Conditions: 150 mM KOAc, 10 mM MgCl2 and 150 mM bicine (pH 8.5), 24 C.
Structure probing data (2A3 and DMS) for a 177-nucleotide construct.
2A3 adducts were read by reverse transcription with SuperScript II with manganese.
Values cover nucleotides 27 to 126.
RNA sequence: GGGAACGACUCGAGUAGAGUCGAAAAUCAUCCAAGUUCGCUUGGAUGAAACGGUACUGAAGCUAAAAACGAUCCGAGGCAACAGUUCCAUAAAAGGAUCGACAGCCUGCAAAUUCGUUUGCAGGAAAUUGUUCUGUCAAUUCGUUGACAGAACAAUAAAAGAAACAACAACAACAAC
Reactivity to 2A3 in 0.01 (KOAc 150mM, MgCl2 10mM, bicine 150mM(pH8.5), 24C), signal-to-noise 3, nucleotides 027 to 126: u010c000a000u000c000c000a010a010g000u020u100c220g020c090u010u000g000g010a010u000g020a000a010a000c050g040g030u100a040c030u050g040a050a010g020c030u090a140a050a000a060a120c010g000a010u000c010c010g050a040g040g010c010a070a020c000a080g010u070u000c000c000a010u110a020a100a000a030g000g000a010u010c010g020a020c020a020g090c000c010u010g000c000a000a000a040u050u060c150g060u060u010u010g010c000a000g000g000a030a060
Reactivity to DMS in 0.01 (KOAc 150mM, MgCl2 10mM, bicine 150mM(pH8.5), 24C), signal-to-noise 5, nucleotides 027 to 126: u000c000a010u000c000c000a000a000g020u000u010c230g030c000u000u000g000g000a010u010g000a010a050a070c140g020g020u010a070c050u010g000a070a270g010c030u010a030a040a060a070a100c030g000a010u000c010c010g030a090g010g000c020a030a240c060a050g010u000u000c010c010a080u010a040a050a130a120g000g020a010u010c000g010a260c230a100g010c000c000u010g000c000a000a000a030u010u010c160g020u000u000u000g000c000a000g000g000a020a020